[RMDB]
RNA sequence: GGGAACGACUCGAGUAGAGUCGAAAAUUUUUUAAGUAUUUCAAAGUAAAAUUACAUGUUAAUACGUAGUAUUAAUGGCGAGACUCCUGAGGGAGCAGUGCCAGUCGAAGACCGAGGCUGAGACGGCAAUAUGUAUUGGCUUCGGCCAAUACAUAUUAAAAGAAACAACAACAACAAC
Reactivity to DMS in 0.01 (KOAc 150mM, MgCl2 10mM, bicine 150mM(pH8.5), 24C), signal-to-noise 6, nucleotides 027 to 126: u000u020u030u010u040u020a050a130g000u010a050u010u010u010c010a070a110a150g000u010a050a070a050a090u010u010a060c050a100u020g000u010u010a010a020u000a010c010g010u010a100g010u010a040u010u010a040a050u010g000g010c020g010a200g000a130c010u000c000c010u000g010a180g020g020g010a010g000c030a130g010u040g010c000c000a050g000u010c090g000a110a090g010a090c040c020g010a080g020g010c050u000g000a150g000a050c080g010g000c080
Reactivity to 2A3 in 0.01 (KOAc 150mM, MgCl2 10mM, bicine 150mM(pH8.5), 24C), signal-to-noise 2, nucleotides 027 to 126: u070u030u070u040u040u160a090a010g010u010a120u010u060u040c040a080a090a030g020u040a150a170a140a100u170u170a090c060a110u110g030u060u070a010a010u040a030c090g040u020a010g080u040a120u120u100a150a060u050g060g000c000g000a040g110a220c010u000c000c000u060g040a180g030g080g000a000g000c040a010g060u030g090c020c040a010g000u010c060g010a020a020g000a070c040c050g070a020g140g050c010u020g020a000g000a010c000g040g000c000

The record gives the reactivity of an RNA of 177 nucleotides to DMS and 2A3. For 2A3 the reverse transcriptase was SuperScript II with manganese. It was measured as part of the RMDB libraries RFM100 and RFMREP.